[RMDB]
RNA sequence: GGGAACGACUCGAGUAGAGUCGAAAACAACCAGUUACAUUUGAGGCCAUUUGGGCUUAAGCGUAUUCCAUGGAAAGUUAUCGUCCCACAUUUCGGAAAUUAUAUUCCGAGCCAGCAAGAAAAUCUUCGUGGUUUGACUAUUCGUAGUCAAACCACGAAAAGAAACAACAACAACAAC
Reactivity to 2A3 in 0.01 (KOAc 150mM, MgCl2 10mM, bicine 150mM(pH8.5), 24C), signal-to-noise 1, nucleotides 027 to 126: c000a000a000c010c000a060g000u000u050a070c010a010u000u000u180g110a020g040g020c010c010a110u100u140u300g220g000g000c000u000u040a040a000g000c000g000u030a150u170u000c010c070a100u000g000g000a010a090a080g120u040u060a230u270c080g020u000c090c000c000a040c030a060u030u140u000c000g010g000a000a000a000u140u140a200u150a080u150u000c010c000g000a000g110c110c010a020g000c050a130a080g110a050a120a000a000u060c020u000u000